The data come from the RNA Mapping Database (RMDB), library 15KLIB. This 170-nucleotide RNA was probed chemically with 2A3 and DMS.

RNA sequence: GGGAACGACUCGAGUAGAGUCGAAAAACUCAUGGGUCCAUCGUCCAUCUCCUUCUUACCUUUUGGCCGGCAUGGUCCCAGCCUCCUCGCUGGCGCCGGCUGGGCAACAUUCCGAAGGGGACCGUCCGUCCUGACCGAUUCGUCGGUCAGAAAAGAAACAACAACAACAAC
Reactivity to 2A3 in 0.01 (KOAc 150mM, MgCl2 10mM, bicine 150mM(pH8.5), 24C), signal-to-noise 9, nucleotides 027 to 129: a000c020u030c030a070u110g020g010g010u050c040c020a080u080c040g070u010c020c010a080u020c020u010c020c000u050u030c020u060u100a140c020c010u070u070u050u090g110g030c000c000g020g010c040a110u140g030g030u080c040c000c000a010g000c000c020u110c010c010u060c070g020c030u040g010g000c040g010c010c000g030g000c010u010g010g010g000c020a050a020c020a120u150u040c030c020g020a030a020g010g000g010g000a000c000c010g050u030c010c020g050u050c010
Reactivity to DMS in 0.01 (KOAc 150mM, MgCl2 10mM, bicine 150mM(pH8.5), 24C), signal-to-noise 6, nucleotides 027 to 129: a060c000u000c000a010u050g000g020g050u000c040c060a120u050c020g040u030c020c050a120u000c090u000c000c020u000u040c030u040u050a160c110c030u000u000u000u000g040g040c000c020g020g030c040a000u040g030g030u050c280c010c010a070g050c000c000u040c080c080u050c150g030c030u040g000g030c180g030c050c010g040g040c000u020g000g000g000c080a090a050c160a120u050u030c030c080g020a090a060g020g000g010g000a020c000c070g020u020c040c050g000u020c090
The RNA was probed in 150 mM KOAc, 10 mM MgCl2 and 150 mM bicine (pH 8.5) at 24 C.